[RMDB]
RNA sequence: GGGAACGACUCGAGUAGAGUCGAAAACGACGGCUUUGGGCACGACAUCUCUCCUCGGGUGUAGCGAUCUGUUACAGCUUAUAGCAAAGUGCUACACCGAGCUGUGGUGAGGGGCGCACACGGCUAGCGUUGUGUUCACCUUCGGGUGAACACAACGAAAAGAAACAACAACAACAAC
Reactivity to DMS in 0.01 (KOAc 150mM, MgCl2 10mM, bicine 150mM(pH8.5), 24C), signal-to-noise 1, nucleotides 027 to 126: c030g010a090c060g000g030c040u030u000u020g000g000g000c010a220c030g000a120c050a090u000c020u020c000u000c270c060u000c010g010g000g000u010g020u010a000g000c010g030a070u050c080u010g000u000u000a030c230a180g000c070u030u020a240u020a010g030c010a060a050a010g000u050g030c030u010a020c000a030c000c000g050a020g000c140u010g000u000g050g010u020g000a080g100g030g030g000c140g030c030a100c000a040c000g060g010c010u000a040g000
Reactivity to 2A3 in 0.01 (KOAc 150mM, MgCl2 10mM, bicine 150mM(pH8.5), 24C), signal-to-noise 4, nucleotides 027 to 126: c040g120a000c030g010g020c000u000u030u060g040g020g030c020a010c050g090a080c060a080u020c020u000c010u000c030c040u030c030g210g030g050u070g000u000a000g000c000g040a120u090c010u030g060u080u150a120c110a100g060c110u230u240a120u110a140g010c020a100a080a030g040u080g030c000u000a000c000a000c010c000g000a000g000c050u180g040u090g080g010u050g030a070g070g040g030g000c090g020c000a040c000a000c020g040g000c000u030a030g050